[RMDB]
RNA sequence: GGGAACGACUCGAGUAGAGUCGAAAAAGGCCCGUAGCGAUGGGGAGGGAUGCUAGGAGUUGGGGGAGACCGAAGCGAGGAGGAAAGCAAAGAAAGCAACGGGGCUAGCGAGUGGAUGUUCCUCCCCUAAGAGCUCGUUUCGACGAGCUCAAAAGAAACAACAACAACAAC
Reactivity to 2A3 in 0.01 (KOAc 150mM, MgCl2 10mM, bicine 150mM(pH8.5), 24C), signal-to-noise 1, nucleotides 027 to 129: a000g060g010c000c000c020g000u020a020g030c080g070a040u090g000g000g000g000a020g010g040g020a030u110g030c000u050a100g040g000a050g000u050u100g010g000g000g000g000a070g010a020c010c010g040a020a010g060c010g000a030g000g040a000g020g000a060a040a000g050c060a030a000a100g130a030a120a000g010c000a000a070c000g000g000g070g000c000u030a040g050c000g040a020g000u060g040g060a030u040g050u000u000c000c000u000c000c000c000c000u020a020a010
Reactivity to DMS in 0.01 (KOAc 150mM, MgCl2 10mM, bicine 150mM(pH8.5), 24C), signal-to-noise 3, nucleotides 027 to 129: a020g000g060c030c020c000g050u060a060g020c100g030a130u050g030g030g030g010a020g000g040g000a030u040g020c000u050a070g030g120a050g010u040u040g020g000g000g070g000a110g020a000c110c040g020a110a080g050c160g030a060g080g030a010g010g010a010a120a050g030c190a020a070a050g050a070a020a130g000c050a140a150c180g000g000g010g120c080u020a050g050c090g010a100g020u000g050g000a080u000g010u010u000c000c000u020c020c020c020c000u010a010a080
Structure probing data (2A3 and DMS) for a 170-nucleotide construct. Conditions: 150 mM KOAc, 10 mM MgCl2 and 150 mM bicine (pH 8.5), 24 C.